[RMDB]
RNA sequence: GGGAACGACUCGAGUAGAGUCGAAAAGUGUCUCUUCGGAGACACAAAAAAGCGUACUACUGACACAACAGCAAUUGAACUACUGCAGUGUCCCAAAUAGGACACGCAGCAAUUGACAUGUGUCAGUAUCGCAAAAAGGGGUAGUUCGCUACCCCAACAAGAGGACCUAGUUCGCUAGGUCCUCUUGAAAAGAAACAACAACAACAAC
Reactivity to DMS in 0.01 (KOAc 150mM, MgCl2 10mM, bicine 150mM(pH8.5), 24C), signal-to-noise 1, nucleotides 027 to 156: g030u000g010u000c000u000c000u000u010c300g040g000a030g000a070c010a000c010a010a060a070a210a050a040g020c020g000u000a080c170u000a040c020u010g000a030c000a000c000a050a080c110a180g050c030a070a070u000u000g000a150a300c030u000a120c000u000g000c000a190g020u000g030u000c010c000c020a070a140a200u010a030g000g000a020c000a000c000g040c000a000g000c010a000a030u000u000g060a070c020a300u000g010u000g010u000c010a010g030u000a020u000c030g080c020a110a050a020a140a010g000g000g010g040u000a030g010u000u000c040g030c000u000a020c050c000c000c000a000a030
Reactivity to 2A3 in 0.01 (KOAc 150mM, MgCl2 10mM, bicine 150mM(pH8.5), 24C), signal-to-noise 2, nucleotides 027 to 156: g020u000g000u000c000u000c020u000u100c210g140g010a000g000a000c010a000c000a000a060a000a000a000a130g000c040g040u160a130c070u000a000c000u010g050a000c000a010c000a080a110c030a090g050c000a030a030u010u000g010a060a010c070u230a030c000u300g000c030a130g000u000g000u000c000c020c000a190a300a060u290a060g010g000a000c000a010c010g030c000a000g000c000a000a040u010u010g130a080c020a040u010g010u010g000u000c000a000g010u000a000u040c000g000c000a070a020a040a020a000g000g010g000g000u000a000g000u030u060c140g040c140u000a000c000c010c000c000a000a000
Chemical mapping of a 207-nucleotide RNA with DMS and 2A3. For DMS, 1,856 sequencing reads were counted. DMS adducts were read by reverse transcription with MarathonRT. Source: RMDB library RNAMAK, as collected in RNAgym. For 2A3, 1,607 sequencing reads were counted. 2A3 adducts were read by reverse transcription with SuperScript II with manganese.